[RMDB]
RNA sequence: GGGAACGACUCGAGUAGAGUCGAAAAGGACGGUCGACUCGAUGUCCUCGGGGUAGUGAUUGCGCCCGUAUACGAUCAGCAUGUCCUUCAUACGGCCCACGAUGAACAUCUCGUCCUCGGAGAGGAAACCUAAAUAAAGUUUCGACUUUAUUUAGGUAAAAGAAACAACAACAACAAC
Reactivity to DMS in 0.01 (KOAc 150mM, MgCl2 10mM, bicine 150mM(pH8.5), 24C), signal-to-noise 9, nucleotides 027 to 126: g010g010a030c030g020g010u000c040g010a090c110u000c030g010a120u010g000u000c130c080u000c030g010g010g010g010u000a070g020u010g010a130u010u000g010c080g010c060c010c020g010u000a060u000a090c090g010a050u000c040a070g010c060a100u000g010u000c020c020u000u000c060a090u010a100c120g010g000c020c010c030a120c090g010a070u010g010a070a080c140a080u000c050u000c050g010u000c020c020u000c060g010g000a130g010a060g000g010a070a140
Reactivity to 2A3 in 0.01 (KOAc 150mM, MgCl2 10mM, bicine 150mM(pH8.5), 24C), signal-to-noise 9, nucleotides 027 to 126: g020g010a010c030g020g050u100c040g040a070c040u020c060g070a110u090g060u080c020c020u000c010g000g000g020g010u070a060g070u050g190a190u110u190g040c100g150c020c010c000g010u030a060u020a040c060g030a050u040c030a010g060c030a060u130g020u020c010c000u010u030c030a080u080a180c050g050g000c010c020c010a020c030g050a070u140g040a040a030c020a110u030c030u020c060g090u030c020c010u030c040g140g040a100g000a010g090g020a080a080